RNA sequence: GGGAACGACUCGAGUAGAGUCGAAAACAUGCUGGGGCGCGGCCUGGUUUCUCGGCCAGGGCUGGCGCGGCAGAUCGCUGCCGUCAGGGCUGGUGAGGAGCCCGAGGACAUGAGCUGGGCCGAAUUGCGCCAAAUUGAAUUUCGAUUCAAUUUGGCGAAAAGAAACAACAACAACAAC
Reactivity to DMS in 0.01 (KOAc 150mM, MgCl2 10mM, bicine 150mM(pH8.5), 24C), signal-to-noise 2, nucleotides 027 to 126: c060a090u000g050c080u000g000g010g030g030c080g020c040g010g010c010c020u000g030g030u000u000u010c000u000c040g000g020c010c020a050g000g010g010c000u000g000g010c030g010c030g030g000c020a110g000a110u030c300g020c010u000g020c160c020g020u010c030a040g010g000g000c010u000g000g010u000g020a070g000g000a060g000c040c010c070g010a100g000g010a090c170a120u010g000a120g010c020u000g000g000g010c020c010g010a120a080u000u000g030
Reactivity to 2A3 in 0.01 (KOAc 150mM, MgCl2 10mM, bicine 150mM(pH8.5), 24C), signal-to-noise 1, nucleotides 027 to 126: c040a020u130g090c060u080g000g020g030g060c110g000c020g030g030c000c010u030g120g030u000u080u010c020u000c000g120g050c030c040a030g020g080g050c000u020g040g000c030g020c000g000g040c020a010g050a170u150c180g010c150u030g070c060c010g000u000c000a000g030g210g150c020u020g000g060u020g030a080g000g050a000g000c020c000c010g020a060g080g010a050c090a150u150g010a000g000c010u060g000g040g030c000c020g010a100a090u120u150g030

The data come from the RNA Mapping Database (RMDB), library OK2TRN.
An RNA of 177 nucleotides, treated with DMS and 2A3 and read out base by base.
For 2A3 the reverse transcriptase was SuperScript II with manganese.
Conditions: 150 mM KOAc, 10 mM MgCl2 and 150 mM bicine (pH 8.5), 24 C.
For DMS the reverse transcriptase was MarathonRT.